[RMDB]
RNA sequence: GGGAACGACUCGAGUAGAGUCGAAAAACGGCAGGUCGUAGGUACGCCUACGACCUGCCGAGGUUUAAUGCUAAUCGUGAUAGGGGUUUAGUGCUGAUGAACACCUAUGCUGUUAGCAUUAAUCUAAUCUAUAGACGGUAUUCGUACCGUCUAUAGAAAAAGAAACAACAACAACAAC
Reactivity to 2A3 in 0.01 (KOAc 150mM, MgCl2 10mM, bicine 150mM(pH8.5), 24C), signal-to-noise 4, nucleotides 027 to 126: a000c000g000g000c010a000g020g000u010c020g000u020a000g010g020u050a030c300g050c050c000u010a000c000g050a000c000c000u000g000c020c000g000a010g000g000u010u020u020a000a000u000g010c000u010a010a010u050c000g040u060g300a030u000a010g000g000g010g000u010u020u020a260g070u250g250c180u140g120a210u150g020a020a000c000a000c000c000u000a000u010g040c010u000g000u010u000a000g000c000a000u000u000a010a000u020c000u020a050a070
Reactivity to DMS in 0.01 (KOAc 150mM, MgCl2 10mM, bicine 150mM(pH8.5), 24C), signal-to-noise 3, nucleotides 027 to 126: a070c030g020g040c000a020g040g010u000c000g090u010a030g020g040u000a120c280g010c010c000u000a010c010g000a000c000c010u000g040c010c010g020a000g000g000u000u000u000a010a000u000g000c000u000a010a000u010c300g000u000g020a040u000a020g000g000g000g000u000u000u000a040g020u020g020c200u040g010a120u000g000a010a000c010a030c000c000u010a010u000g010c000u000g000u010u000a020g000c000a000u000u000a000a010u000c020u010a090a140
The record gives the reactivity of an RNA of 177 nucleotides to 2A3 and DMS. DMS adducts were read by reverse transcription with MarathonRT. Reactivities are rounded to 0.1 and cut off at 0 and 3. The RNA was probed in 150 mM KOAc, 10 mM MgCl2 and 150 mM bicine (pH 8.5) at 24 C.